[RMDB]
RNA sequence: GGGAACGACUCGAGUAGAGUCGAAAAGAUAUGGAGCUCUCCCCACCUUGCAGAGGAGCUAUGAAGAUUGCUUCGUUCGGAAACGAACGAAGCAAUUGGAGCUCCGAUCAAGAGGAGCUCCUAAGUCCAGUUAUUAAAAGUUCGCUUUUAAUAACUGAAAAGAAACAACAACAACAAC
Reactivity to 2A3 in 0.01 (KOAc 150mM, MgCl2 10mM, bicine 150mM(pH8.5), 24C), signal-to-noise 1, nucleotides 027 to 126: g030a110u240a270u300g030g000a000g000c020u000c040u060c030c000c010c030a030c000c000u040u020g000c110a040g070a080g020g030a000g000c010u060a300u220g050a000a030g030a010u000u010g000c030u040u010c000g000u040u020c010g030g060a080a180a160c020g000a000a010c050g040a000a000g030c010a020a000u030u000g000g020a000g000c000u000c020c000g010a020u010c000a000a010g020a020g000g000a020g000c030u000c000c000u030a180a000g050u060c120
Reactivity to DMS in 0.01 (KOAc 150mM, MgCl2 10mM, bicine 150mM(pH8.5), 24C), signal-to-noise 3, nucleotides 027 to 126: g010a110u010a150u020g000g020a030g030c000u000c020u000c140c020c010c050a300c130c020u000u010g000c200a060g020a300g000g000a020g030c010u000a140u010g000a190a190g000a010u010u000g000c000u000u000c020g020u010u010c000g020g000a100a100a290c010g000a000a010c010g020a000a000g010c000a010a000u000u000g010g010a020g030c000u000c000c000g000a150u010c010a020a030g000a180g020g000a030g020c020u000c000c000u000a030a070g000u000c110

This 177-nucleotide RNA was probed chemically with 2A3 and DMS. For DMS the reverse transcriptase was MarathonRT. The RNA was probed in 150 mM KOAc, 10 mM MgCl2 and 150 mM bicine (pH 8.5) at 24 C. For 2A3, 2,599 sequencing reads were counted. The data come from the RNA Mapping Database (RMDB), library TTRINS.